[RMDB]
RNA sequence: GGGAACGACUCGAGUAGAGUCGAAAACAGCCUGGAGCACAGCACUGGCCAGAAGCAUGGCCAGACCGCCACCUGGAGUCUGCCGGGGCGGUUGGCUGGAUGCUUCUCGUCGCACACGAUGAAGAGCCGAUACGGCGAUCUUCGGAUCGCCGUAUCGAAAAGAAACAACAACAACAAC
Reactivity to DMS in 0.01 (KOAc 150mM, MgCl2 10mM, bicine 150mM(pH8.5), 24C), signal-to-noise 2, nucleotides 027 to 126: c130a120g010c000c000u000g000g000a030g030c050a000c060a010g010c070a300c080u050g010g000c020c080a000g000a050a000g000c020a000u010g030g000c000c000a010g010a070c040c000g000c000c080a240c010c000u110g070g000a300g000u060c190u030g000c010c000g030g030g000g030c000g000g000u000u060g000g000c030u010g000g000a010u010g000c030u000u000c030u000c200g050u000c000g010c150a100c120a060c060g010a030u000g040a050a050g000a130g040c090
Reactivity to 2A3 in 0.01 (KOAc 150mM, MgCl2 10mM, bicine 150mM(pH8.5), 24C), signal-to-noise 4, nucleotides 027 to 126: c070a000g030c000c000u080g020g040a050g010c060a010c020a090g020c020a030c100u080g040g000c030c010a000g000a070a010g060c060a080u040g000g030c010c010a010g030a030c000c000g100c000c030a300c130c070u200g050g000a110g080u110c090u200g140c020c020g000g000g010g000c000g000g000u000u000g010g010c000u020g070g100a020u030g020c000u000u010c010u000c030g040u030c030g030c030a060c020a030c150g050a050u150g100a050a060g010a000g110c040

Structure probing data (DMS and 2A3) for a 177-nucleotide construct. The RNA was probed in 150 mM KOAc, 10 mM MgCl2 and 150 mM bicine (pH 8.5) at 24 C. For 2A3, 2,508 sequencing reads were counted. It was measured as part of the RMDB library OK1LIB. For DMS the reverse transcriptase was MarathonRT. For 2A3 the reverse transcriptase was SuperScript II with manganese. Values cover nucleotides 27 to 126.